[RMDB]
RNA sequence: GGGAACGACUCGAGUAGAGUCGAAAACUUCCCUCCUGGUACCUUCGGGUCCAGCAAUCAUCAGGGGAUGUCUGUAAACCCAAAGUGAUUGUCAUAUAGAACAGAAUCGCCGUGCAGUACGUUGUGGACGAAGCGGCUAAAACUUACACAACUCGCCCCUUAUCAAACAGUUCGCUGUUUGAUAAGGAAAAGAAACAACAACAACAAC
Reactivity to DMS in 0.01 (KOAc 150mM, MgCl2 10mM, bicine 150mM(pH8.5), 24C), signal-to-noise 2, nucleotides 027 to 156: c020u010u000c000c000c020u010c050c050u000g000g000u000a060c020c010u000u020c240g060g040g050u000c000c010a040g020c000a030a030u000c020a010u000c020a300g030g020g020g020a140u000g020u000c060u000g020u000a080a150a300c010c000c000a040a150a220g020u010g010a050u010u000g020u000c030a080u000a130u010a100g000a130a180c030a120g000a080a090u000c040g000c000c020g000u000g020c030a260g000u000a080c030g000u010u000g010u000g000g000a120c000g000a130a230g000c000g010g000c020u000a020a060a060a130c100u000u000a070c030a070c030a010a040c050u000c050g000c050c070
Reactivity to 2A3 in 0.01 (KOAc 150mM, MgCl2 10mM, bicine 150mM(pH8.5), 24C), signal-to-noise 6, nucleotides 027 to 156: c030u030u010c010c000c000u070c010c000u020g030g040u170a090c000c010u050u090c300g100g000g000u000c000c000a000g010c000a000a000u000c010a000u060c020a030g000g000g000g030a030u100g020u010c000u010g030u030a110a090a140c000c010c000a010a030a010g000u010g010a010u010u000g000u000c030a020u180a030u060a240g080a060a000c000a010g020a040a010u010c020g000c010c010g060u130g060c220a010g000u020a010c030g000u020u000g000u000g000g010a000c010g010a030a010g010c000g000g010c000u000a000a000a010a020c000u080u190a010c000a010c000a010a030c010u040c110g100c000c010
Structure probing data (DMS and 2A3) for a 207-nucleotide construct. The RNA was probed in 150 mM KOAc, 10 mM MgCl2 and 150 mM bicine (pH 8.5) at 24 C. DMS adducts were read by reverse transcription with MarathonRT.